[RMDB]
RNA sequence: GGGAACGACUCGAGUAGAGUCGAAAAUGGUUACAGUUAUGGGCAUGCCUCCGAUUGGUUUUAGGAUAACAAUGGAGAUAAAUACAGGGUGGUUUUCUAAGAAAGGCUUUCCAUCAACUUGAAUGUCCGAUAUGUUCUAAUUCGUUAGAACAUAUCGAAAAGAAACAACAACAACAAC
Reactivity to 2A3 in 0.01 (KOAc 150mM, MgCl2 10mM, bicine 150mM(pH8.5), 24C), signal-to-noise 6, nucleotides 027 to 126: u110g040g010u060u070a060c030a050g010u070u080a070u110g020g000g000c050a020u080g020c000c000u000c010c020g080a100u030u070g040g060u050u040u050u140a090g030g020a070u050a150a020c020a030a030u050g030g020a040g010a050u120a080a110a020u160a050c040a030g050g050g030u030g040g000u040u040u060u010c020u030a050a040g050a080a040a010g010g000c000u020u040u000c010c000a040u040c020a020a060c020u040u070g060a140a020u080g070u060c030
Reactivity to DMS in 0.01 (KOAc 150mM, MgCl2 10mM, bicine 150mM(pH8.5), 24C), signal-to-noise 9, nucleotides 027 to 126: u010g010g010u000u000a080c100a080g010u000u010a070u000g010g000g010c070a060u000g010c070c010u000c030c030g010a110u000u010g010g010u010u000u010u010a100g010g010a090u000a060a070c050a050a060u000g000g010a070g010a120u010a050a070a100u010a080c100a070g010g000g030u000g000g010u000u010u000u000c040u000a060a080g010a060a080a090g010g010c040u000u000u000c020c020a050u000c100a040a070c080u000u000g010a070a070u010g000u000c090